The record gives the reactivity of an RNA of 177 nucleotides to 2A3. The reactions ran in a buffer of 150 mM KOAc, 10 mM MgCl2 and 150 mM bicine (pH 8.5), at 24 C.
RNA sequence: GGGAACGACUCGAGUAGAGUCGAAAAUCCCAAAGCGGAUUUAGCUCGGUUGGGAGAGAUCCAGACCGAAGAUCUGGCGGUCCUGUGUUCGAUCCACAGAAUUCGCACCAUAAACAACGGGAGAUUCGGCUGACUAUCCGUUCGCGGAUAGUCAGCCAAAAGAAACAACAACAACAAC
Reactivity to 2A3 in 0.01 (KOAc 150mM, MgCl2 10mM, bicine 150mM(pH8.5), 24C), signal-to-noise 1, nucleotides 027 to 126: u050c020c000c000a110a000a000g020c010g020g000a000u010u010u020a060g070c060u000c030g040g050u230u060g180g000g010a060g000a000g000a040u000c000c000a000g010a000c000c000g000a130a000g040a130u080c040u090g090g000c000g010g000u020c060c000u050g010u030g040u000u080c070g040a020u000c020c030a010c000a000g000a010a000u090u060c000g000c060a060c020c000a060u140a140a080a020c010a000a080c030g040g080g000a130g020a060u150u140c060